The record gives the reactivity of an RNA of 170 nucleotides to DMS and 2A3.
The reactions ran in a buffer of 150 mM KOAc, 10 mM MgCl2 and 150 mM bicine (pH 8.5), at 24 C.
It was measured as part of the RMDB library 15KLIB.
[RMDB]
RNA sequence: GGGAACGACUCGAGUAGAGUCGAAAACGGGCCCCCUCCCAGGAAAGGGAACAGGGGGAAAUCGACCGGGUCCCGCAGAACCCGAUGGAGUCCCCCACCAUCCCUUCCGGAUGAAACUGGUCCCGAUCAGCCGUCUUCUUCGGAAGACGGAAAAGAAACAACAACAACAAC
Reactivity to DMS in 0.01 (KOAc 150mM, MgCl2 10mM, bicine 150mM(pH8.5), 24C), signal-to-noise 2, nucleotides 027 to 129: c020g010g030g070c000c010c020c050c040u030c000c030c080a080g040g020a090a040a050g030g030g090a050a080c240a230g010g020g000g000g000a000a050a060u020c050g000a000c080c030g000g010g050u000c060c090c120g000c170a090g020a180a000c000c000c000g010a060u040g070g010a050g050u020c040c010c030c000c030a080c230c150a150u010c000c000c000u060u010c050c080g020g020a110u080g030a030a110a030c120u040g010g010u000c040c000c020g010a140u050c000a110g000
Reactivity to 2A3 in 0.01 (KOAc 150mM, MgCl2 10mM, bicine 150mM(pH8.5), 24C), signal-to-noise 6, nucleotides 027 to 129: c020g000g000g010c000c000c000c000c000u030c020c010c000a020g030g010a160a050a050g010g000g010a020a020c070a140g030g010g000g010g100a010a010a090u040c020g060a050c020c020g000g000g000u030c050c050c020g020c010a030g030a050a000c010c000c010g000a020u110g050g010a030g050u030c000c000c000c000c000a050c020c020a050u030c000c000c000u010u020c000c010g000g000a040u130g070a050a040a050c090u090g010g000u090c000c020c000g000a070u080c040a010g060